RNA sequence: GGGAACGACUCGAGUAGAGUCGAAAAUAAAUUAUAAAAGCUGAGAUGAGCUCAGCAAGGGUAUUUUUCGAUGGCGAAAGCCUCGUUCCCUUUCCCUUGCUCCGGAAACGGUAGCUUUUACACAUAACUGAUAAAGAUCUUUCGAGAUCUUUAUCAGAAAAGAAACAACAACAACAAC
Reactivity to 2A3 in 0.01 (KOAc 150mM, MgCl2 10mM, bicine 150mM(pH8.5), 24C), signal-to-noise 1, nucleotides 027 to 126: u020a000a020a050u230u140a100u120a160a070a040a020g000c000u010g030a010g010a200u180g180a040g110c000u000c020a000g000c000a000a000g000g000g010u020a020u020u000u030u030u000c000g000a020u070g000g000c030g070a110a030a000g020c010c000u020c000g000u020u020c000c000c010u000u040u010c000c000c020u000u000g010c000u000c010c000g030g000a070a060a040c020g000g020u030a000g000c000u020u050u010u080a130c200a010c000a060u240a300a070
Reactivity to DMS in 0.01 (KOAc 150mM, MgCl2 10mM, bicine 150mM(pH8.5), 24C), signal-to-noise 2, nucleotides 027 to 126: u000a050a140a120u010u000a170u010a020a030a030a050g000c000u000g000a000g020a300u000g000a250g010c040u000c000a010g040c000a000a000g000g020g010u000a070u000u000u010u000u010c010g010a040u020g010g010c000g000a150a100a120g010c000c000u000c000g030u000u000c030c000c010u000u010u000c000c000c000u000u000g000c010u010c010c010g010g010a090a100a120c020g010g000u000a010g000c000u000u000u010u000a080c160a100c170a070u000a090a130